[RMDB]
RNA sequence: GGGAACGACUCGAGUAGAGUCGAAAAAUAAAGUAGUCUCCUGCAGCGUCUGAGGUUUCCGUUGCAGUCCUCGGAACCAGGACCUCGGCGUGGCCUAGCGAGUUAUGGCGACGAUGGCCGUGAAAAAGUUGUUAAGUGAGUUCGCUCACUUAACAACAAAAGAAACAACAACAACAAC
Reactivity to DMS in 0.01 (KOAc 150mM, MgCl2 10mM, bicine 150mM(pH8.5), 24C), signal-to-noise 2, nucleotides 027 to 126: a100u010a050a040a110g020u000a110g030u000c010u000c010c020u000g010c090a200g000c050g020u000c040u020g000a020g010g010u010u000u020c040c050g000u010u000g010c060a110g000u000c020c050u010c070g010g010a080a050c080c070a150g000g000a030c040c020u000c030g000g000c030g010u000g000g010c020c050u000a100g000c050g000a110g000u010u000a090u010g000g000c010g010a050c050g010a110u010g010g000c000c030g000u000g000a040a040a060a090a120
Reactivity to 2A3 in 0.01 (KOAc 150mM, MgCl2 10mM, bicine 150mM(pH8.5), 24C), signal-to-noise 1, nucleotides 027 to 126: a010u180a020a090a020g110u050a000g070u010c010u010c040c020u030g050c040a040g050c010g070u060c030u140g020a050g000g000u050u110u010c000c010g100u120u090g010c090a060g100u050c030c010u040c000g050g030a000a030c070c010a060g000g060a000c010c000u010c010g000g030c010g030u050g030g020c010c010u000a030g020c000g040a030g070u110u120a170u220g050g000c000g000a130c060g040a110u080g020g010c030c010g020u030g030a070a030a010a040a050

The record gives the reactivity of an RNA of 177 nucleotides to DMS and 2A3. Source: RMDB library M2PK90, as collected in RNAgym. DMS adducts were read by reverse transcription with MarathonRT. The RNA was probed in 150 mM KOAc, 10 mM MgCl2 and 150 mM bicine (pH 8.5) at 24 C. The DMS profile rests on 1,827 reads.